This 177-nucleotide RNA was probed chemically with 2A3 and DMS.

[RMDB]
RNA sequence: GGGAACGACUCGAGUAGAGUCGAAAAUGGUGUCGUCCGAUCGUGGUUUGUGCGGCGCAUACAACGCCAAUAUUUUCCGUCGCUCCGAGGAGCUGUUCUCCCUGCUGAGGGAGGCCGGAAAGCAGCCUAAGUUAAGUACGUUCGCGUACUUAACUUAAAAAGAAACAACAACAACAAC
Reactivity to 2A3 in 0.01 (KOAc 150mM, MgCl2 10mM, bicine 150mM(pH8.5), 24C), signal-to-noise 6, nucleotides 027 to 126: u120g020g010u040g010u060c040g040u040c020c030g010a130u080c060g050u100g080g150u100u130u200g120u120g040c030g000g000c010g000c030a010u080a200c060a070a020c030g000c010c010a040a020u140a120u070u050u020u000c020c020g020u050c030g030c010u000c010c000g070a160g090g000a020g020c020u010g100u100u040c000u030c000c010c000u100g100c090u130g100a050g000g020g000a000g000g000c010c000g010g010a010a020a020g030c040a010g000c000c020
Reactivity to DMS in 0.01 (KOAc 150mM, MgCl2 10mM, bicine 150mM(pH8.5), 24C), signal-to-noise 9, nucleotides 027 to 126: u010g010g020u000g010u000c040g010u010c060c030g010a070u000c070g040u000g010g010u010u000u010g030u010g020c110g010g010c030g010c180a090u010a260c160a080a090c050g010c020c020a060a140u010a090u010u000u000u000c010c010g000u000c100g010c020u010c010c050g010a180g020g010a060g020c020u010g010u000u000c010u000c000c010c010u000g010c260u010g000a070g010g010g000a020g010g010c180c020g000g000a030a030a040g010c130a060g010c040c070
Values cover nucleotides 27 to 126.